[RMDB]
RNA sequence: GGGAACGACUCGAGUAGAGUCGAAAAACGCUGACCAGCAUGGCGGGUAUCAUUUUGAACGUGGGUAUGGCGAUUGAUGCGAAUGUGUUGAUCUUUGAGCGUAUUAAAGAGGAGCUACGUGCUGGGCAGGGACACUUACUUUCGAGUAAGUGUCCCUAAAAGAAACAACAACAACAAC
Reactivity to DMS in 0.01 (KOAc 150mM, MgCl2 10mM, bicine 150mM(pH8.5), 24C), signal-to-noise 1, nucleotides 027 to 126: a100c140g020c110u000g010a080c050c010a010g000c010a030u010g020g020c100g020g010g000u000a140u030c040a080u000u000u000u000g020a090a080c180g000u010g000g010g020u000a060u010g020g010c050g000a010u000u020g000a060u000g010c030g030a090a060u020g050u020g050u000u000g000a080u000c010u010u020u010g000a130g000c070g020u000a140u000u000a040a040a080g000a070g000g000a170g020c060u000a080c110g010u000g000c040u000g000g000g000c110
Reactivity to 2A3 in 0.01 (KOAc 150mM, MgCl2 10mM, bicine 150mM(pH8.5), 24C), signal-to-noise 2, nucleotides 027 to 126: a000c020g010c090u070g000a020c000c010a000g020c000a010u050g070g000c090g050g010g020u060a200u220c060a070u070u160u080u160g060a030a020c050g020u000g040g030g060u180a120u170g100g000c030g040a020u000u040g050a020u080g000c080g080a300a150u210g030u000g040u030u060g000a000u010c000u050u060u110g050a040g000c050g020u070a100u140u200a160a090a010g030a030g070g040a040g000c010u000a000c020g020u010g030c010u010g060g010g000c010
About this RNA: The record gives the reactivity of an RNA of 177 nucleotides to DMS and 2A3. The RNA was probed in 150 mM KOAc, 10 mM MgCl2 and 150 mM bicine (pH 8.5) at 24 C. For 2A3, 1,043 sequencing reads were counted. 2A3 adducts were read by reverse transcription with SuperScript II with manganese. Values cover nucleotides 27 to 126.